[RMDB]
RNA sequence: GGGAACGACUCGAGUAGAGUCGAAAAGAAGCGAUCUCAUCCACAUGGGCAGCUGCCGUCGCCAGCAUGUCAGGGGCUGUGACCAGGUGCGACAUCUCCCCGUCCUUCCCAACGGACCGGCGCCCGCUGCCUCUGUCAUGUUCGCAUGACAGAGGCAAAAAGAAACAACAACAACAAC
Reactivity to DMS in 0.01 (KOAc 150mM, MgCl2 10mM, bicine 150mM(pH8.5), 24C), signal-to-noise 2, nucleotides 027 to 126: g010a060a060g000c060g060a070u010c010u000c030a080u000c010c050a110c090a080u040g010g010g000c140a060g000c000u010g070c040c010g000u000c020g020c030c050a130g000c080a000u030g000u030c060a080g020g050g000g020c050u000g000u020g040a050c110c040a140g040g020u030g010c000g000a040c080a040u040c070u060c090c070c000c000g000u030c000c050u000u000c010c020c000a250a130c060g010g000a010c030c030g010g000c060g000c030c020c060g000c100
Reactivity to 2A3 in 0.01 (KOAc 150mM, MgCl2 10mM, bicine 150mM(pH8.5), 24C), signal-to-noise 2, nucleotides 027 to 126: g160a060a000g030c020g030a110u040c000u050c040a100u040c010c040a060c000a130u100g080g010g020c000a030g000c030u080g070c020c000g040u060c000g080c050c010a010g040c070a130u070g080u140c070a040g020g000g000g000c010u040g040u050g070a100c050c000a010g010g060u080g040c010g010a040c030a040u080c060u040c020c000c000c040g010u000c010c010u040u030c000c000c000a000a000c010g010g040a020c060c000g000g000c030g000c020c000c000g000c020
Structure probing data (DMS and 2A3) for a 177-nucleotide construct. For DMS the reverse transcriptase was MarathonRT. It was measured as part of the RMDB library OK1LIB. Values cover nucleotides 27 to 126. The RNA was probed in 150 mM KOAc, 10 mM MgCl2 and 150 mM bicine (pH 8.5) at 24 C.